[RMDB]
RNA sequence: GGGAACGACUCGAGUAGAGUCGAAAAGAUAUGGAUAGAGCAACAGCUAUUUCAUCGGAAACGAUGAUGUAGACAUGCUCGUCCUAAGUCAAAUCGAUCGCGCAACGUUCGCGUUGCGCGAUCGAAAGAACUAGCUUAUGUUCGCAUAAGCUAGUUCAAAAGAAACAACAACAACAAC
Reactivity to DMS in 0.01 (KOAc 150mM, MgCl2 10mM, bicine 150mM(pH8.5), 24C), signal-to-noise 2, nucleotides 027 to 126: g000a040u010a140u020g000g000a040u000a070g010a000g000c000a040a050c300a090g000c000u010a000u000u010u000c000a010u010c000g010g010a060a060a060c010g020a010u000g000a000u000g000u000a000g020a220c070a270u000g000c000u000c000g000u000c000c000u000a020a080g000u000c020a040a100a180u010c030g010a000u000c000g000c020g030c000a040a000c020g020u000u010c220g010c010g000u000u000g010c030g010c000g000a000u000c000g000a000a020a100
Reactivity to 2A3 in 0.01 (KOAc 150mM, MgCl2 10mM, bicine 150mM(pH8.5), 24C), signal-to-noise 2, nucleotides 027 to 126: g000a010u040a050u090g000g000a010u120a300g000a090g000c000a020a120c090a230g070c030u020a020u000u040u000c000a010u000c000g000g000a040a030a010c010g000a010u010g000a000u000g020u000a020g060a140c020a040u030g000c010u000c000g000u000c000c000u020a070a010g040u000c040a050a030a180u050c000g030a000u020c000g000c000g040c040a010a040c020g070u120u130c300g030c040g160u000u020g050c030g000c000g040a010u010c010g000a000a000a000

The record gives the reactivity of an RNA of 177 nucleotides to DMS and 2A3. The reactions ran in a buffer of 150 mM KOAc, 10 mM MgCl2 and 150 mM bicine (pH 8.5), at 24 C. It was measured as part of the RMDB library TTRDEL. High 2A3 reactivity points to a flexible backbone, as in loops and unpaired stretches. DMS adducts were read by reverse transcription with MarathonRT. Values cover nucleotides 27 to 126.